Structure probing data (DMS and 2A3) for a 207-nucleotide construct. Conditions: 150 mM KOAc, 10 mM MgCl2 and 150 mM bicine (pH 8.5), 24 C. Source: RMDB library RSTRND, as collected in RNAgym. Reactivities are rounded to 0.1 and cut off at 0 and 3. For DMS the reverse transcriptase was MarathonRT. Reactivities are given for positions 27 through 156.
[RMDB]
RNA sequence: GGGAACGACUCGAGUAGAGUCGAAAAUUAAAUGAAGCAAACUAACUUCGAUUGUUGCGUUCUGCAUAGGAGUUAGGGAUUUUACAGAACGAUAAGCAUGUAGUGGUCAAUUCGUAAUUUGCCAAGGACGAGAGUUCAAUUCUCUCCACCUCCAAUUAAUUACUUGAAGGUUCGCCUUCAAGUAAUUAAAAGAAACAACAACAACAAC
Reactivity to DMS in 0.01 (KOAc 150mM, MgCl2 10mM, bicine 150mM(pH8.5), 24C), signal-to-noise 2, nucleotides 027 to 156: u000u000a100a070a100u030g030a110a130g040c050a100a080a170c100u000a030a050c010u000u000c010g030a150u000u000g020u010u000g000c040g000u000u000c030u030g000c040a060u000a300g010g020a030g020u010u000a060g000g010g000a130u000u000u010u000a130c020a120g020a020a060c070g010a090u000a060a100g010c040a040u010g000u000a050g020u020g000g010u000c060a040a090u010u000c080g060u000a040a160u000u000u000g000c020c090a110a080g000g030a090c050g000a090g010a020g040u040u010c100a080a210u000u010c040u010c000u010c010c040a190c050c010u010c020c020a060a200u000u010
Reactivity to 2A3 in 0.01 (KOAc 150mM, MgCl2 10mM, bicine 150mM(pH8.5), 24C), signal-to-noise 6, nucleotides 027 to 156: u080u030a040a020a050u150g050a050a010g050c050a040a000a130c020u030a020a000c010u010u030c040g150a180u290u160g050u040u080g040c020g030u050u050c060u100g020c020a030u040a100g000g000a010g020u010u020a020g020g020g010a030u050u070u100u160a060c040a040g030a040a000c020g030a030u040a150a010g010c030a020u100g040u130a020g060u030g040g020u030c050a030a050u040u050c040g040u070a020a150u040u040u110g050c050c020a040a050g040g010a020c090g000a010g000a000g030u070u200c060a050a060u160u030c000u000c000u000c010c010a030c010c020u040c020c020a010a010u040u020